[RMDB]
RNA sequence: GGGAACGACUCGAGUAGAGUCGAAAAGGGAUGCUUCUCUCCGAGAUCCAUCACGAUCACCACCUCUUGGAGUACGAUGCCGUCAUUGUCGACGAGGCACACGAACGUAGCCUCAACAUCGAUCUCCGGUGUGCUGAGAGUUCGCUCUCAGCACACCAAAAGAAACAACAACAACAAC
Reactivity to DMS in 0.01 (KOAc 150mM, MgCl2 10mM, bicine 150mM(pH8.5), 24C), signal-to-noise 1, nucleotides 027 to 126: g010g000g020a000u030g000c010u000u000c000u000c010u010c110c140g020a070g000a040u040c100c020a140u000c170a130c050g000a220u000c040a280c000c080a050c140c030u020c070u000u020g000g000a020g020u000a240c000g000a040u000g150c080c070g040u020c000a050u000u020g000u010c110g000a120c060g000a000g020g030c040a040c060a130c070g000a120a040c190g000u000a050g020c020c000u000c110a020a140c020a050u000c000g000a250u010c000u000c020c040
Reactivity to 2A3 in 0.01 (KOAc 150mM, MgCl2 10mM, bicine 150mM(pH8.5), 24C), signal-to-noise 2, nucleotides 027 to 126: g030g000g010a010u040g030c010u050u000c000u000c000u040c040c110g010a010g000a040u000c030c020a010u020c020a010c060g040a040u100c020a070c130c010a090c020c020u090c030u100u160g000g010a000g040u030a080c050g010a020u050g090c110c030g070u080c030a070u100u260g160u150c050g000a040c030g010a000g000g010c000a020c010a020c110g200a230a020c080g000u050a010g000c000c010u020c020a060a100c010a040u020c010g070a170u020c010u020c010c020
An RNA of 177 nucleotides, treated with DMS and 2A3 and read out base by base.
For 2A3 the reverse transcriptase was SuperScript II with manganese.
DMS adducts were read by reverse transcription with MarathonRT.
For DMS, 707 sequencing reads were counted.
Reactivities are given for positions 27 through 126.